RNA sequence: GGGAACGACUCGAGUAGAGUCGAAAAGGGUUUCGCUGUGCAGUGGCACUUUCUGCCAUGAUGGAAAUGACAGUCACCUGCACUGUCCGGUGCAGCAGCCACUAGCCACAGGGGCCAAGCACUCAGGAAAACAGACAAACUUCGGUUUGUCUGUUUUAAAAGAAACAACAACAACAAC
Reactivity to 2A3 in 0.01 (KOAc 150mM, MgCl2 10mM, bicine 150mM(pH8.5), 24C), signal-to-noise 2, nucleotides 027 to 126: g150g030g000u060u110u300c130g060c140u010g000u000g000c020a010g010u000g000g010c010a020c080u050u180u030c050u030g050c000c010a040u110g020a100u140g090g190a180a260a080u090g000a010c000a000g020u000c020a110c120c050u050g060c040a000c030u080g120u060c050c090g000g040u060g000c010a020g000c030a000g020c000c000a010c000u010a040g030c040c010a010c000a010g020g020g030g000c010c010a020a000g020c040a050c040u070c030a010g090g210
Reactivity to DMS in 0.01 (KOAc 150mM, MgCl2 10mM, bicine 150mM(pH8.5), 24C), signal-to-noise 4, nucleotides 027 to 126: g010g010g020u010u000u000c050g000c030u000g010u000g010c040a040g000u000g000g010c000a190c200u000u010u010c010u000g020c000c010a040u000g010a140u020g020g010a090a110a040u000g010a010c020a030g010u000c120a140c300c080u000g000c050a010c010u000g000u010c120c110g000g000u010g010c000a020g030c300a180g000c000c000a020c000u000a070g020c170c060a010c010a060g000g000g010g000c020c010a100a060g000c130a080c070u010c070a160g000g010
The record gives the reactivity of an RNA of 177 nucleotides to 2A3 and DMS. It was measured as part of the RMDB library OK2TRN.